[RMDB]
RNA sequence: GGGAACGACUCGAGUAGAGUCGAAAAGAAAGAAAUCGAGAGACUAGCAAUAUCCGUAAUUAGAUCGAAUAACUCGUUCUUGAUCUAACUGAGGGAUGAGUAAGCGGAUUCUAGUCUAAUCGAGAAAGGGUAUCAAUGAGUUCGCUCAUUGAUACCCAAAAGAAACAACAACAACAAC
Reactivity to DMS in 0.01 (KOAc 150mM, MgCl2 10mM, bicine 150mM(pH8.5), 24C), signal-to-noise 1, nucleotides 027 to 126: g060a000a090a010g020a100a090a200u000c010g000a000g020a030g000a000c000u000a000g050c300a050a010u020a050u000c000c020g000u000a060a160u030u000a080g000a030u000c060g080a160a070u050a090a110c030u030c060g050u000u000c030u000u000g020a010u000c020u000a160a140c230u000g020a190g010g000g000a300u020g000a010g020u000a020a100g000c030g030g000a000u000u020c000u000a000g020u000c000u000a000a000u010c030g010a000g020a070a010a000
Reactivity to 2A3 in 0.01 (KOAc 150mM, MgCl2 10mM, bicine 150mM(pH8.5), 24C), signal-to-noise 2, nucleotides 027 to 126: g160a000a150a000g110a020a080a000u030c020g000a020g000a000g000a010c010u000a000g000c110a080a100u070a040u120c000c000g030u060a050a020u100u090a030g040a150u080c050g070a100a040u120a080a030c030u020c050g030u030u020c000u050u110g120a090u030c000u000a020a190c090u080g050a060g010g100g020a040u040g000a010g000u060a060a000g020c000g000g000a000u000u000c000u000a000g000u000c000u050a050a110u000c000g000a000g000a060a010a000
This 177-nucleotide RNA was probed chemically with DMS and 2A3. The 2A3 profile rests on 1,981 reads. DMS adducts were read by reverse transcription with MarathonRT. The reactions ran in a buffer of 150 mM KOAc, 10 mM MgCl2 and 150 mM bicine (pH 8.5), at 24 C.